[RMDB]
RNA sequence: GGGAACGACUCGAGUAGAGUCGAAAAGAUAUGGAGAAUAUACAGCUUUUGACGAGACUGUAUCGGAAACGAUAUUGUCUCGAUAAGCUGUAUUCUCCUAAGUCAAAGAGGACGUUCGCGUCCUCAACCUUUAGAAUCAGUUCGCUGAUUCUAAAGGAAAAGAAACAACAACAACAAC
Reactivity to 2A3 in 0.01 (KOAc 150mM, MgCl2 10mM, bicine 150mM(pH8.5), 24C), signal-to-noise 7, nucleotides 027 to 126: g020a020u060a040u120g010g010a000g010a030a000u230a020u030a200c010a010g010c020u140u180u300u300g300a260c070g010a000g000a000c010u020g000u010a010u000c010g030g010a040a040a030c010g000a000u000a000u030u030g010u000c000u000c010g000a010u010a010a020g000c000u000g010u000a000u010u010c000u000c000c000u000a080a020g050u010c060a110a070a170g010a000g000g010a010c020g020u100u100c300g050c010g190u010c000c000u000c000a010a000
Reactivity to DMS in 0.01 (KOAc 150mM, MgCl2 10mM, bicine 150mM(pH8.5), 24C), signal-to-noise 5, nucleotides 027 to 126: g010a040u010a300u000g000g010a020g010a030a060u010a140u000a090c020a000g010c010u000u000u000u010g020a210c140g010a020g010a020c000u000g010u000a000u000c000g010g000a100a050a190c010g010a020u000a000u000u000g000u000c000u000c000g020a060u010a020a010g010c000u000g000u000a010u000u000c000u000c000c000u000a010a090g000u000c030a090a100a170g020a010g010g000a030c000g040u010u020c300g010c020g020u000c010c010u000c010a040a070